[RMDB]
RNA sequence: GGGAACGACUCGAGUAGAGUCGAAAAAAGCACAGCCAUUACACAAAUGCGCGCGUGUACACGUUGUGCUGACUCAGGCAGCUACCGUAAUCGGCGAACAGUCCUCAAGAUAGUGAGUCAACGCAACACUAAUGCCUGACUUCGGUCAGGCAUUAGUAAAAGAAACAACAACAACAAC
Reactivity to DMS in 0.01 (KOAc 150mM, MgCl2 10mM, bicine 150mM(pH8.5), 24C), signal-to-noise 3, nucleotides 027 to 126: a050a030g000c020a030c020a210g010c000c040a060u000u000a040c220a100c300a040a030a080u010g000c220g000c020g000c230g000u010g000u000a010c170a080c150g000u000u000g010u000g000c050u020g010a020c020u000c020a110g020g030c080a110g000c030u030a050c000c000g000u010a060a080u010c100g010g000c080g030a050a100c030a040g000u000c020c030u030c110a110a070g010a190u010a070g000u010g010a060g000u010c020a010a080c090g000c030a020a020c040
Reactivity to 2A3 in 0.01 (KOAc 150mM, MgCl2 10mM, bicine 150mM(pH8.5), 24C), signal-to-noise 4, nucleotides 027 to 126: a000a000g000c000a010c000a000g000c000c010a020u070u080a040c150a030c020a040a080a050u120g030c130g000c000g020c140g080u000g020u060a040c060a000c170g010u010u020g000u000g000c010u010g000a010c000u010c000a000g060g070c020a030g000c040u060a030c060c020g030u080a070a110u220c000g040g000c020g000a060a060c000a070g110u170c020c020u070c030a060a080g090a170u140a050g210u130g080a010g010u010c000a020a010c020g010c000a020a010c010